[RMDB]
RNA sequence: GGGAACGACUCGAGUAGAGUCGAAAACCCUCACUCUUCGGAGUGAGGGAAAUCUGAUUCCCAAUAGCUGGGUAUCCGCGCUAAGACGGAUAGGCGUUGCCAAAAGAUCUGGCUUCGGCCAGAUCAAGACAAGUACCGGGUUCGCCCGGUACUUGUCAAAAGAAACAACAACAACAAC
Reactivity to DMS in 0.01 (KOAc 150mM, MgCl2 10mM, bicine 150mM(pH8.5), 24C), signal-to-noise 1, nucleotides 027 to 126: c000c000c000u010c000a000c000u010c000u000u030c230g020g010a030g040u000g000a000g000g000g000a010a000a050u020c110u020g000a240u000u000c000c000c020a100a200u000a010g030c030u010g020g000g020u000a020u010c000c020g010c050g010c140u000a140a100g020a140c020g020g000a010u010a050g010g010c040g000u020u000g000c070c010a080a100a080a050g000a000u000c000u010g000g000c020u010u000c140g040g010c000c000a010g000a010u010c000a020a000